[RMDB]
Source: RMDB library M2PK90, as collected in RNAgym. This 177-nucleotide RNA was probed chemically with 2A3 and DMS. The DMS profile rests on 1,277 reads. The RNA was probed in 150 mM KOAc, 10 mM MgCl2 and 150 mM bicine (pH 8.5) at 24 C. The 2A3 profile rests on 1,517 reads.
RNA sequence: GGGAACGACUCGAGUAGAGUCGAAAAUAACGGACUAGGAAACACGAUCUUUUAAGUGGUAAUCCUAGCGAAUCCACGGCGAGGAAACUAGGACACUAACCAUGUGAUCCCGGACGCUAGAAGAAAACCCUUUAUCCUCUUUCGAGAGGAUAAAGGGAAAAGAAACAACAACAACAAC
Reactivity to 2A3 in 0.01 (KOAc 150mM, MgCl2 10mM, bicine 150mM(pH8.5), 24C), signal-to-noise 2, nucleotides 027 to 126: u220a030a030c060g050g070a070c000u000a020g010g000a090a070a030c020a020c030g090a060u090c120u020u300u010u130a190a060g000u030g010g030u060a030a100u000c000c000u000a000g000c010g020a010a050u070c020c010a050c070g030g050c050g020a060g000g100a080a080a050c030u020a050g010g020a000c000a000c040u050a060a000c000c000a030u140g040u020g030a250u010c020c030c000g010g020a000c030g020c010u040a040g060a130a020g070a000a140a030a070
Reactivity to DMS in 0.01 (KOAc 150mM, MgCl2 10mM, bicine 150mM(pH8.5), 24C), signal-to-noise 2, nucleotides 027 to 126: u010a120a030c100g020g010a130c020u000a020g000g000a040a120a090c030a010c020g000a070u010c090u010u010u020u010a110a130g030u010g020g020u000a110a080u000c000c000u010a000g000c040g000a170a100u000c020c000a110c090g000g000c080g000a070g000g000a110a110a110c080u030a090g000g000a040c050a000c030u000a060a150c290c250a070u000g000u000g010a070u000c000c000c000g000g030a090c000g000c040u030a100g010a100a060g000a100a030a020a080